RNA sequence: GGGAACGACUCGAGUAGAGUCGAAAACCUUCCUUCUUCGGUGAUCCCGUCUCUCCUGUUCGGUGAACCCUCCCGGGUGUUUCCUCUUCCUAGGUCCGGAGUCGACCUCCAUCUGAUCCGUCCUGGCAUCGAUCACGAUUCGUCGUGAUCAAAAGAAACAACAACAACAAC
Reactivity to DMS in 0.01 (KOAc 150mM, MgCl2 10mM, bicine 150mM(pH8.5), 24C), signal-to-noise 9, nucleotides 027 to 129: c050c000u020u020c040c010u010u020c030u000u000c080g020g010u000g020a090u000c040c000c010g030u000c010u000c030u000c040c030u010g000u020u020c050g010g030u010g000a090a100c060c020c030u010c020c030c030g000g000g000u000g010u000u000u000c000c000u020c020u010u000c000c010u010a070g020g000u020c020c060g000g000a050g000u010c030g010a100c050c000u000c000c020a100u030c050u010g010a080u030c030c060g020u000c030c000u030g030g020c060a020u020c080
Reactivity to 2A3 in 0.01 (KOAc 150mM, MgCl2 10mM, bicine 150mM(pH8.5), 24C), signal-to-noise 9, nucleotides 027 to 129: c010c000u070u100c030c000u050u110c000u040u050c020g030g010u040g030a030u030c010c000c010g030u000c020u000c000u010c010c000u030g040u050u050c030g030g030u060g060a060a060c000c000c000u030c010c010c000g010g000g000u050g020u010u050u010c000c000u010c000u020u010c010c010u030a020g040g000u000c030c020g040g010a020g020u030c020g030a050c000c010u000c010c000a080u030c030u050g030a040u010c010c020g030u010c010c010u000g020g010c020a050u080c070
Conditions: 150 mM KOAc, 10 mM MgCl2 and 150 mM bicine (pH 8.5), 24 C. This 170-nucleotide RNA was probed chemically with DMS and 2A3. For DMS, 123,713 sequencing reads were counted. For 2A3 the reverse transcriptase was SuperScript II with manganese. The data come from the RNA Mapping Database (RMDB), library 15KLIB.